[RMDB]
RNA sequence: GGGAACGACUCGAGUAGAGUCGAAAACGUUCCAUCCUUUCUUACCUGAUGGCCGGCAUGGUCCCAGCCUCCUUCGUGGCGCCGGCUGGGCAACAUUCCGAGGGGACCGUCCCUCGGUAAUGGCGAAGCUGCUUACUAUCUUCGGAUAGUAAGCAGCAAAAGAAACAACAACAACAAC
Reactivity to 2A3 in 0.01 (KOAc 150mM, MgCl2 10mM, bicine 150mM(pH8.5), 24C), signal-to-noise 1, nucleotides 027 to 126: c020g060u070u010c010c020a100u060c050c070u060u140u090c000u070u060a080c010c010u080g090a090u090g120g080c050c020g020g090c060a040u150g110g020u050c000c000c010a020g010c020c020u000c000c000u120u260c210g090u170g040g070c020g010c140c030g010g000c000u000g000g040g000c000a040a000c000a010u080u050c000c000g000a000g000g030g000g000a090c040c040g300u300c000c000c010u000c000g010g000u030a010a000u020g020g000c050g030a070a000
Reactivity to DMS in 0.01 (KOAc 150mM, MgCl2 10mM, bicine 150mM(pH8.5), 24C), signal-to-noise 1, nucleotides 027 to 126: c130g000u000u000c000c020a130u020c070c060u020u000u010c030u000u000a100c060c050u020g000a090u000g000g010c100c030g010g000c080a040u000g000g000u000c010c020c010a200g040c000c040u000c060c040u000u000c100g040u010g000g000c260g030c030c080g010g020c010u010g000g000g010c030a080a100c010a000u000u010c000c000g010a030g020g000g000g030a150c170c290g020u000c010c000c040u000c010g000g010u000a000a010u000g000g020c080g000a060a160
This 177-nucleotide RNA was probed chemically with 2A3 and DMS. The data come from the RNA Mapping Database (RMDB), library VIROID. The DMS profile rests on 1,050 reads. Conditions: 150 mM KOAc, 10 mM MgCl2 and 150 mM bicine (pH 8.5), 24 C. For 2A3 the reverse transcriptase was SuperScript II with manganese. Values cover nucleotides 27 to 126. DMS adducts were read by reverse transcription with MarathonRT.